This 207-nucleotide RNA was probed chemically with 2A3.
[RMDB]
RNA sequence: GGGAACGACUCGAGUAGAGUCGAAAAGUACUAUUAAAACCUAUGAUGUCCAUGGGUGACAUAAUUACAUAUAACGGAUGUAAAGACAAUGAAUGGAUGAUAGAACAACUCUCUACCCUAAACUUUAACAAUCUCCGCACAUGGAACUCAUGUAGCACCUUUGCUUCGACUUCGGUCGAAGCAAAGGAAAAGAAACAACAACAACAAC
Reactivity to 2A3 in 0.01 (KOAc 150mM, MgCl2 10mM, bicine 150mM(pH8.5), 24C), signal-to-noise 1, nucleotides 027 to 156: g000u030a040c010u030a080u260u050a070a090a140a050c010c000u010a090u050g000a030u120g070u050c080c000a050u080g000g000g000u030g000a000c030a030u210a050a030u070u090a000c010a010u130a000u070a300a020c010g080g000a030u050g000u000a050a050a050g170a000c040a030a300u170g080a010a010u050g040g110a070u000g090a090u010a050g050a080a000c050a100a230c000u070c000u000c000u080a110c000c070c020u190a190a150a000c000u120u050u100a100a140c090a050a060u000c090u040c120c150g000c010a000c000a010u000g050g000a100a020c030u010c110a000u170g000u010a000g110c000a070

The 2A3 profile rests on 324 reads.
The RNA was probed in 150 mM KOAc, 10 mM MgCl2 and 150 mM bicine (pH 8.5) at 24 C.
2A3 adducts were read by reverse transcription with SuperScript II with manganese.